An RNA of 177 nucleotides, treated with DMS and 2A3 and read out base by base. DMS adducts were read by reverse transcription with MarathonRT. For 2A3 the reverse transcriptase was SuperScript II with manganese. The DMS profile rests on 788 reads. The reactions ran in a buffer of 150 mM KOAc, 10 mM MgCl2 and 150 mM bicine (pH 8.5), at 24 C.

RNA sequence: GGGAACGACUCGAGUAGAGUCGAAAAGAAGAGAGGAAGAUUUAGGGGAAGAAGAUAACAAUAUUCACGCGGUCUUCCAUGUUACGUGUGUAGACACAAUGAUUGUUAUCAAAACUAAAUAUGAGAAGAGCGAUGAGGGAUUCGUCCCUCAUCGCUCAAAAGAAACAACAACAACAAC
Reactivity to DMS in 0.01 (KOAc 150mM, MgCl2 10mM, bicine 150mM(pH8.5), 24C), signal-to-noise 1, nucleotides 027 to 126: g000a080a100g040a020g000a180g000g010a190a040g000a020u020u000u000a060g000g010g000g010a020a040g000a180a130g000a000u020a000a040c000a000a000u000a050u060u110c020a100c300g000c130g000g010u000c000u000u000c010c000a010u000g060u020u090a180c040g020u010g000u030g000u000a010g000a050c000a040c140a020a090u000g000a050u000u000g000u000u000a000u000c000a000a050a050a240c150u000a100a120a060u000a040u000g020a230g000a210a100
Reactivity to 2A3 in 0.01 (KOAc 150mM, MgCl2 10mM, bicine 150mM(pH8.5), 24C), signal-to-noise 1, nucleotides 027 to 126: g130a020a000g060a010g020a010g020g020a040a050g010a020u010u010u110a080g000g050g000g000a000a020g000a070a000g000a060u010a000a000c000a020a020u000a010u080u050c100a000c170g000c100g000g000u000c000u030u000c000c000a000u010g060u210u130a100c240g000u000g030u000g040u010a000g000a040c030a000c030a100a010u090g100a110u020u050g000u000u010a030u000c000a040a020a040a040c050u100a050a000a060u270a090u140g040a000g070a190a000